RNA sequence: GGGAACGACUCGAGUAGAGUCGAAAAAGGACGGCCCCGGCGCGAGCCUGGCACUGCGCAUCCUGGCGGCUCGGCUGCCGGAUUCCGGCGUCUACGUGUGCCACGCCCGCAACGCGCACGGCCACGCCAAGCAUUCGUGAUUCGUCACGAAUGCUUGAAAAGAAACAACAACAACAAC
Reactivity to 2A3 in 0.01 (KOAc 150mM, MgCl2 10mM, bicine 150mM(pH8.5), 24C), signal-to-noise 3, nucleotides 027 to 126: a000g090g010a040c050g040g040c030c000c010c020g030g000c010g000c010g010a000g000c010c010u050g050g020c020a010c100u090g030c030g000c020a040u050c000c040u120g030g010c020g010g020c040u070c140g280g000c070u090g000c000c020g000g000a030u160u030c080c040g050g000c000g020u010c050u080a090c050g140u100g020u030g040c010c010a020c040g000c020c000c000g020c040a040a050c050g010c020g000c020a050c100g000g020c000c000a020c020g040c000
Reactivity to DMS in 0.01 (KOAc 150mM, MgCl2 10mM, bicine 150mM(pH8.5), 24C), signal-to-noise 4, nucleotides 027 to 126: a100g020g010a090c080g020g000c060c030c030c030g000g000c210g030c030g010a060g000c010c040u000g010g020c040a040c030u010g020c040g030c070a100u000c040c020u000g040g010c020g020g010c000u020c180g030g020c020u000g030c000c010g000g010a060u000u000c170c120g010g010c020g010u010c110u010a100c150g030u010g010u000g010c000c040a080c190g020c010c040c010g010c090a070a080c150g020c110g000c080a090c090g000g000c010c050a090c080g000c120
Chemical mapping of a 177-nucleotide RNA with 2A3 and DMS. It was measured as part of the RMDB library OK2TRN. For DMS the reverse transcriptase was MarathonRT. Values cover nucleotides 27 to 126.